[RMDB]
This 177-nucleotide RNA was probed chemically with DMS and 2A3.
RNA sequence: GGGAACGACUCGAGUAGAGUCGAAAAGAUAUGGAACUUUGGGAGCUGAAGAGGGAAUCGGAAACGAUUCCUCCCCACCUUCAGCGAAGAACAAAGUUCCUAAGUCAAAGGCCUGUUCGCAGGCCAAGAUUAGCCUAAUGUUCGCAUUAGGCUAAUCAAAAGAAACAACAACAACAAC
Reactivity to DMS in 0.01 (KOAc 150mM, MgCl2 10mM, bicine 150mM(pH8.5), 24C), signal-to-noise 5, nucleotides 027 to 126: g000a060u000a300u010g010g010a010a000c000u000u000u000g010g010g010a070g010c000u000g000a000a010g000a170g030g000g000a020a010u000c000g010g010a100a090a220c000g000a020u000u000c010c010u010c080c010c010c030a300c090c010u000u000c000a010g020c000g000a080a120g000a100a200c020a000a020a000g010u000u000c000c000u000a010a070g000u000c050a050a130a170g000g020c010c000u000g010u000u010c180g030c000a010g000g000c000c010a010a030
Reactivity to 2A3 in 0.01 (KOAc 150mM, MgCl2 10mM, bicine 150mM(pH8.5), 24C), signal-to-noise 3, nucleotides 027 to 126: g020a020u120a130u230g000g010a010a000c000u010u010u010g010g000g010a030g000c010u010g010a000a000g010a020g000g000g000a000a010u010c000g000g040a040a050a050c020g010a010u020u000c000c000u040c010c010c010c000a020c010c000u000u000c000a000g010c010g050a150a010g000a010a010c020a010a000a000g000u000u000c010c010u020a090a020g070u050c060a180a100a050g010g000c000c010u010g030u060u070c300g010c120a000g030g000c030c010a010a010